The record gives the reactivity of an RNA of 177 nucleotides to DMS and 2A3. The DMS profile rests on 8,649 reads. It was measured as part of the RMDB library TTRDES. The RNA was probed in 150 mM KOAc, 10 mM MgCl2 and 150 mM bicine (pH 8.5) at 24 C.

RNA sequence: GGGAACGACUCGAGUAGAGUCGAAAAGAUAUGGAAUAGUGGUGGGAGGAGUACUCGGAAACGAGUAUACUCCAUCGAUCACCCUAUUCCUAAGUCAAACCGGUAAUCGGUUCGCCGAUUACCGGAACUUAUAUUACGAGUUCGCUCGUAAUAUAAGAAAAGAAACAACAACAACAAC
Reactivity to DMS in 0.01 (KOAc 150mM, MgCl2 10mM, bicine 150mM(pH8.5), 24C), signal-to-noise 5, nucleotides 027 to 126: g000a040u000a260u020g000g000a020a010u000a020g010u020g050g040u000g000g010g020a100g020g010a040g010u000a020c010u000c000g020g000a040a060a100c000g010a020g000u000a090u000a060c010u000c000c000a170u000c290g010a130u010c000a010c000c000c000u000a000u000u000c000c000u000a010a070g010u000c030a080a160a190c020c010g000g010u000a000a000u000c010g000g010u000u020c250g010c000c000g000a010u000u000a000c010c000g010g000a010a020
Reactivity to 2A3 in 0.01 (KOAc 150mM, MgCl2 10mM, bicine 150mM(pH8.5), 24C), signal-to-noise 4, nucleotides 027 to 126: g010a000u050a020u110g000g040a000a020u030a010g130u260g280g000u020g010g110g130a160g010g000a010g040u010a010c000u000c000g000g030a030a020a010c010g010a010g030u030a020u020a050c010u010c010c000a030u290c080g050a080u050c010a000c000c000c000u000a000u000u000c000c000u010a020a000g010u000c040a070a050a130c000c000g000g010u010a000a000u000c000g000g100u050u090c290g060c060c010g010a000u010u000a010c000c000g000g000a000a000

2A3 adducts were read by reverse transcription with SuperScript II with manganese.